RNA sequence: GGGAACGACUCGAGUAGAGUCGAAAACCCUCUCCCGAGUGCACUCAGUUUAACUGUUGUCAGUUUUUACUCAGUGUUGGAUUUAAUUAUGUAGGACCAAAACAUUCCUCAGUAAAUUAGCUUGCUAUUUCAUGACUUAUUUCGAUAAGUCAUGAAAAAAAGAAACAACAACAACAAC
Reactivity to 2A3 in 0.01 (KOAc 150mM, MgCl2 10mM, bicine 150mM(pH8.5), 24C), signal-to-noise 9, nucleotides 027 to 126: c000c000c000u000c010u010c000c010c010g060a040g100u120g010c010a000c010u010c010a020g010u000u040u050a030a010c010u010g120u260u170g150u300c020a010g000u010u020u010u040u040a010c010u010c020a000g000u010g000u060u130g030g010a060u050u120u160a120a110u130u120a110u170g140u130a020g010g030a030c060c050a030a050a060a050c060a090u100u050c000c010u010c020a020g060u130a020a080a120u080u070a040g030c030u030u080g020c010u070a060
Reactivity to DMS in 0.01 (KOAc 150mM, MgCl2 10mM, bicine 150mM(pH8.5), 24C), signal-to-noise 7, nucleotides 027 to 126: c020c020c010u000c040u000c010c010c010g020a170g010u010g010c010a020c020u000c160a060g000u000u000u010a040a040c020u010g010u040u020g000u030c030a030g010u010u010u020u000u010a030c010u010c180a030g010u000g020u000u010g000g010a120u010u010u010a050a060u010u010a060u010g000u010a020g010g000a050c220c080a050a070a110a130c150a130u010u010c000c000u010c030a070g000u010a020a050a050u000u010a080g010c080u010u010g000c060u000a090
Structure probing data (2A3 and DMS) for a 177-nucleotide construct. High DMS reactivity at an A or C suggests that its Watson-Crick edge is free. For 2A3 the reverse transcriptase was SuperScript II with manganese. It was measured as part of the RMDB libraries RFM100 and RFMREP.